[RMDB]
RNA sequence: GGGAACGACUCGAGUAGAGUCGAAAAAGCAUACCAGCUCGUACGCGAGCUGGUAUGCAAAAAUUGGUGUAGCCUUACCGUAGUAGGCACAAAAACGUCAGCUGGAUCUACGGAUCCAGCUGACGAAAAAAGUGUUUUGUGUUCGCACAAAACACAACAGUAGUUAAUACUUCGGUAUUAACUACUGAAAAGAAACAACAACAACAAC
Reactivity to DMS in 0.01 (KOAc 150mM, MgCl2 10mM, bicine 150mM(pH8.5), 24C), signal-to-noise 1, nucleotides 027 to 156: a190g010c000a010u000a010c020c000a030g020c000u010c000g030u000a090c250g060c020g010a020g040c000u010g000g000u010a000u010g030c020a000a010a030a090a160u010u000g010g000u000g010u000a120g040c010c010u000u000a030c070c060g060u000a120g010u020a050g010g010c000a070c090a030a090a130a100a100c010g010u020c000a010g000c020u000g000g000a080u020c000u000a130c220g070g010a020u010c020c010a000g010c000u000g000a000c000g000a000a000a030a160a030a090g030u010g010u010u000u010u030g040u000g010u000u010c300g050c030a050c000a000a010a010a000c000a000c010a040a110
Reactivity to 2A3 in 0.01 (KOAc 150mM, MgCl2 10mM, bicine 150mM(pH8.5), 24C), signal-to-noise 1, nucleotides 027 to 156: a000g000c000a000u010a000c000c000a030g020c070u000c020g000u030a040c190g000c000g130a000g010c020u010g000g000u000a000u000g000c000a000a030a000a000a000u040u140g020g010u060g110u250a000g010c000c000u000u000a000c020c020g030u010a000g050u000a000g050g030c010a020c020a080a030a080a020a010c020g000u000c000a000g040c020u000g020g000a000u000c010u010a060c210g120g000a000u000c000c010a010g000c000u000g000a000c000g000a000a000a000a000a000a000g000u000g000u000u000u010u000g010u020g000u020u050c110g030c120a000c000a010a000a000a000c000a010c010a010a000
The record gives the reactivity of an RNA of 207 nucleotides to DMS and 2A3. For 2A3, 1,296 sequencing reads were counted. For DMS the reverse transcriptase was MarathonRT. The reactions ran in a buffer of 150 mM KOAc, 10 mM MgCl2 and 150 mM bicine (pH 8.5), at 24 C.